[RMDB]
RNA sequence: GGGAACGACUCGAGUAGAGUCGAAAAUUCGUGCGGUAGGAGAAAGACCAUAGCGAUAGGGGGAGAUGCUAGGAGUAGGGGGAGACCGAAGCGAGAAGGAAAGUAAAGAAAGCAACGGGGCUAGUCGCAUAGGCAUAUUCUUCGGAAUAUGCCUAUGAAAAGAAACAACAACAACAAC
Reactivity to 2A3 in 0.01 (KOAc 150mM, MgCl2 10mM, bicine 150mM(pH8.5), 24C), signal-to-noise 1, nucleotides 027 to 126: u030u030c020g000u030g000c030g000g000u070a060g010g050a040g050a080a080a000g050a020c050c020a080u080a050g050c030g060a080u120a100g000g020g020g020g000a050g000a020u060g030c010u060a030g000g060a100g060u060a060g010g000g000g000g000a060g000a000c020c020g030a020a000g060c000g000a040g030a070a020g070g000a060a040a000g050u110a030a060a040g030a030a080a010g000c010a000a060c020g010g010g070g000c010u020a010g030u070c030g010
Reactivity to DMS in 0.01 (KOAc 150mM, MgCl2 10mM, bicine 150mM(pH8.5), 24C), signal-to-noise 2, nucleotides 027 to 126: u010u000c060g000u000g010c060g000g020u000a050g000g010a130g000a060a140a100g000a080c040c030a090u010a110g010c060g010a090u000a100g010g010g010g010g010a060g020a060u010g000c060u000a060g020g020a070g030u000a060g010g040g000g000g010a070g010a060c060c030g010a070a070g010c050g030a050g000a070a070g000g000a040a040a090g010u020a030a080a070g010a020a090a080g000c060a040a040c080g000g000g000g000c050u000a040g000u000c090g000
The record gives the reactivity of an RNA of 177 nucleotides to 2A3 and DMS.
The reactions ran in a buffer of 150 mM KOAc, 10 mM MgCl2 and 150 mM bicine (pH 8.5), at 24 C.
For 2A3 the reverse transcriptase was SuperScript II with manganese.
The 2A3 profile rests on 1,328 reads.